[RMDB]
RNA sequence: GGGAACGACUCGAGUAGAGUCGAAAAGGGAAAUCGUGGUCCACGAAACUCGCCAUCGCGAGAUCGUAGGAGGGCAUGGCCACCAUCACCAUCUUGAUGAUGUUGUGGUGCUUAAGCGUCGUAAGAAAAUGCUGCUACGAUUCGUCGUAGCAGCAUUAAAAGAAACAACAACAACAAC
Reactivity to 2A3 in 0.01 (KOAc 150mM, MgCl2 10mM, bicine 150mM(pH8.5), 24C), signal-to-noise 3, nucleotides 027 to 126: g070g000g010a000a070a140u160c080g010u090g060g140u000c030c010a020c030g050a050a120a100c020u020c010g010c000c080a290u180c170g000c010g000a000g000a010u050c020g000u020a100g010g020a040g000g000g000c050a050u060g050g030c000c000a000c000c010a020u100c000a000c020c010a010u040c050u150u170g090a140u090g010a010u000g010u070u070g000u020g010g030u040g020c050u170u140a070a020g000c010g050u040c030g040u080a090a060g040a060a150
Reactivity to DMS in 0.01 (KOAc 150mM, MgCl2 10mM, bicine 150mM(pH8.5), 24C), signal-to-noise 3, nucleotides 027 to 126: g000g010g000a110a100a070u020c080g030u010g000g010u000c000c020a060c020g000a030a120a130c020u000c010g010c010c290a120u020c190g000c000g000a010g010a140u000c060g000u000a130g030g020a080g000g000g000c070a160u000g010g000c030c010a010c040c000a010u010c020a010c010c020a050u000c170u000u020g010a050u020g000a010u000g000u010u010g020u000g010g020u000g000c090u010u020a090a090g010c120g020u000c070g020u010a060a080g000a070a080

Chemical mapping of a 177-nucleotide RNA with 2A3 and DMS. For DMS, 2,750 sequencing reads were counted. 2A3 adducts were read by reverse transcription with SuperScript II with manganese. Values are in units of 0.01, from 0 to 300, in steps of 10. It was measured as part of the RMDB library OK2TST. Values cover nucleotides 27 to 126.